[RMDB]
RNA sequence: GGGAACGACUCGAGUAGAGUCGAAAACUCCAGUUUUAUGCACAGUGCCGCCGCUGGUUAUCGGCAGGUUUUCAUCUUGACCCAAGGGUGCUUGUUUUUGAUGAGUCUGUACCCUGCCGUUGUAGGACAUACGGUCCUCAUUCGUGAGGACCGUAUGAAAAGAAACAACAACAACAAC
Reactivity to DMS in 0.01 (KOAc 150mM, MgCl2 10mM, bicine 150mM(pH8.5), 24C), signal-to-noise 4, nucleotides 027 to 126: c090u010c020c040a120g010u000u010u000u010a090u010g010c070a080c090a100g000u010g020c030c060g010c070c070g000c040u010g010g000u000u000a060u010c020g010g010c000a040g020g000u000u000u000u000c040a030u000c020u000u000g000a110c100c100c050a080a060g010g020g010u000g010c050u000u000g010u000u000u000u000u000g010a050u000g000a030g010u010c110u010g010u010a120c230c010c000u000g010c020c040g000u000u000g010u020a070g000g020a240
Reactivity to 2A3 in 0.01 (KOAc 150mM, MgCl2 10mM, bicine 150mM(pH8.5), 24C), signal-to-noise 2, nucleotides 027 to 126: c010u000c020c020a010g010u000u000u080u230a160u200g040c060a040c010a130g040u040g020c050c010g000c000c000g060c050u050g030g140u080u110a090u150c000g010g000c030a010g040g040u090u080u000u040c030a030u020c010u010u100g060a050c010c010c020a060a020g120g000g030u090g080c000u080u090g060u050u060u030u070u070g050a070u040g010a000g040u050c090u130g060u080a070c030c000c010u000g030c020c040g010u000u050g100u100a040g040g080a010